Conditions: 150 mM KOAc, 10 mM MgCl2 and 150 mM bicine (pH 8.5), 24 C. Chemical mapping of a 177-nucleotide RNA with 2A3 and DMS. The DMS profile rests on 1,825 reads. Values cover nucleotides 27 to 126.
RNA sequence: GGGAACGACUCGAGUAGAGUCGAAAAGCUUUCCGUUUCGACGGAAAGCAAAGGCAAGUACAUGAGAGAACAAAGAUCACUCAGAAAAGCCGUACUAAAGAAAAAUCAAUCUGUUCGCAGAUUGAAACGGUACUUGAUUAUUCGUAAUCAAGUACCGAAAAGAAACAACAACAACAAC
Reactivity to 2A3 in 0.01 (KOAc 150mM, MgCl2 10mM, bicine 150mM(pH8.5), 24C), signal-to-noise 3, nucleotides 027 to 126: g010c010u020u000u010c000c000g000u020u050u090c210g110a010c000g010g020a000a000a010g000c000a060a020a020g010g000c050a030a040g090u060a050c110a180u090g000a010g000a020g010a120a030c050a130a300a020g060a070u080c000a020c030u010c000a000g060a020a090a030a030g000c020c040g040u040a030c030u110a060a130a080g080a010a130a020a020a010u030c000a000a000u000c000u010g040u070u090c260g010c110a010g000a010u000u000g000a020a030a000
Reactivity to DMS in 0.01 (KOAc 150mM, MgCl2 10mM, bicine 150mM(pH8.5), 24C), signal-to-noise 2, nucleotides 027 to 126: g000c000u000u010u000c000c000g000u000u000u000c130g010a030c000g010g010a000a000a010g000c010a000a050a120g020g010c000a030a060g000u000a090c060a060u000g000a010g020a060g010a020a090c090a140a210a130g010a140u000c030a080c000u000c000a020g000a070a070a170a230g000c000c010g020u020a170c070u000a040a100a110g000a020a070a120a110a130u000c000a010a000u000c000u000g020u000u000c200g040c000a000g000a000u030u000g010a000a040a110